Chemical mapping of a 177-nucleotide RNA with 2A3 and DMS.
[RMDB]
RNA sequence: GGGAACGACUCGAGUAGAGUCGAAAAAAGAUAUGGAAUCUCGUUGUGGGACAUGCUCCCUUUAGCUCGGAAACGAGCUGAUGUGUAGGAUAGGAGCAACAGCCCACACCGAGAUUCCUAAGUCAAAGAAUAUAGGUACCUUCGGGUACCUAUAUUCAAAAGAAACAACAACAACAAC
Reactivity to 2A3 in 0.01 (KOAc 150mM, MgCl2 10mM, bicine 150mM(pH8.5), 24C), signal-to-noise 2, nucleotides 027 to 126: a000a020g050a040u110a060u090g010g010a000a000u010c010u000c010g000u010u020g010u000g040g000g040a050c110a220u120g010c010u040c010c000c000u010u020u010a000g010c000u000c000g030g030a090a110a100c020g020a010g000c010u010g020a020u010g070u050g180u210a140g160g280a250u090a270g000g040a000g020c010a020a050c040a070g060c010c000c000a000c000a000c000c000g000a000g000a000u000u000c000c000u000a000a010g010u000c010a000a090a140
Reactivity to DMS in 0.01 (KOAc 150mM, MgCl2 10mM, bicine 150mM(pH8.5), 24C), signal-to-noise 3, nucleotides 027 to 126: a100a090g010a080u010a300u010g000g000a020a030u000c000u000c010g000u000u010g010u000g000g000g000a050c130a240u000g000c000u000c000c000c020u000u000u000a000g000c000u000c000g000g010a120a110a260c000g000a010g010c000u000g000a010u000g010u000g020u020a150g010g000a220u030a230g020g000a020g000c000a060a090c300a160g000c020c010c000a000c000a010c030c010g000a030g020a010u000u000c000c010u000a020a060g000u000c030a140a100a110
Overview
For 2A3 the reverse transcriptase was SuperScript II with manganese. Conditions: 150 mM KOAc, 10 mM MgCl2 and 150 mM bicine (pH 8.5), 24 C.